[RMDB]
RNA sequence: GGGAACGACUCGAGUAGAGUCGAAAAUCACAGAGCUGCCUCCAGGGCUUGUUUUGGUAAUGCCUUUCUCCCAUUUAUGGGCUACCCUAGUGGCCUGAGUACAUGACCCGGCGGGUUUGUGCCGGGUUAGGUCUAGCUUAUUCGUAAGCUAGACCUAAAAAGAAACAACAACAACAAC
Reactivity to DMS in 0.01 (KOAc 150mM, MgCl2 10mM, bicine 150mM(pH8.5), 24C), signal-to-noise 5, nucleotides 027 to 126: u020c040a080c090a100g000a090g020c020u010g010c030c000u000c060c080a100g000g010g010c050u000u010g010u010u010u010u010g010g010u010a060a080u020g000c030c010u000u020u020c090u010c020c020c020a100u020u030u020a100u020g000g010g010c010u010a030c030c180c120u020a120g020u000g000g020c020c000u000g000a110g030u020a080c140a080u030g000a050c010c000c000g000g010c000g030g000g000u000u030u010g020u000g000c000c000g000g000g010u000
Reactivity to 2A3 in 0.01 (KOAc 150mM, MgCl2 10mM, bicine 150mM(pH8.5), 24C), signal-to-noise 4, nucleotides 027 to 126: u110c000a010c020a060g050a010g060c030u030g020c020c020u040c050c030a070g000g060g030c030u050u110g080u060u080u040u050g070g010u100a110a110u150g030c030c010u040u090u020c060u060c010c010c010a030u090u150u100a180u270g030g020g000c020u040a040c030c030c050u080a080g020u010g030g010c000c010u030g040a030g070u100a060c100a160u210g030a020c000c000c000g000g000c000g030g080g010u070u090u110g060u060g000c000c000g000g000g020u000
This 177-nucleotide RNA was probed chemically with DMS and 2A3. It was measured as part of the RMDB libraries RFM100 and RFMREP.